An RNA of 177 nucleotides, treated with 2A3 and DMS and read out base by base. DMS (dimethyl sulfate) methylates the pairing face of unpaired adenines and cytosines. For DMS the reverse transcriptase was MarathonRT. 2A3 adducts were read by reverse transcription with SuperScript II with manganese.
[RMDB]
RNA sequence: GGGAACGACUCGAGUAGAGUCGAAAAGAUAUGGACCAUCCAUGUCGUCAACGAUGUCGGAAACGACAUUAGACGUCAUGGAGUGGUCCUAAGUCAAAAGAUACGAGGACUUCGGUCCUCGUAUCAACAUCCUGGAGACGUUCGCGUCUCCAGGAUGAAAAGAAACAACAACAACAAC
Reactivity to 2A3 in 0.01 (KOAc 150mM, MgCl2 10mM, bicine 150mM(pH8.5), 24C), signal-to-noise 2, nucleotides 027 to 126: g020a020u040a040u180g000g000a020c010c020a000u020c000c000a000u000g020u040c000g010u010c000a070a050c300g030a010u000g010u000c010g000g030a100a040a070c000g000a010c000a000u000u010a060g010a000c000g030u020c010a010u000g010g010a010g000u020g010g000u000c010c000u000a010a020g020u010c040a010a020a080a150g000a000u000a010c000g020a020g000g020a000c000u170u160c300g050g010u000c010c010u030c010g000u000a010u000c000a000a000
Reactivity to DMS in 0.01 (KOAc 150mM, MgCl2 10mM, bicine 150mM(pH8.5), 24C), signal-to-noise 2, nucleotides 027 to 126: g010a030u000a300u000g000g010a030c010c000a070u000c010c010a000u000g000u010c000g010u000c000a150a090c210g000a000u000g000u000c000g010g000a080a080a200c010g000a010c010a000u000u000a230g020a010c010g000u010c000a000u010g000g000a020g030u000g030g000u000c000c010u000a000a040g000u000c050a070a050a160a170g000a010u010a000c010g020a020g000g000a010c010u000u010c240g010g000u000c000c000u010c010g000u000a000u000c000a050a150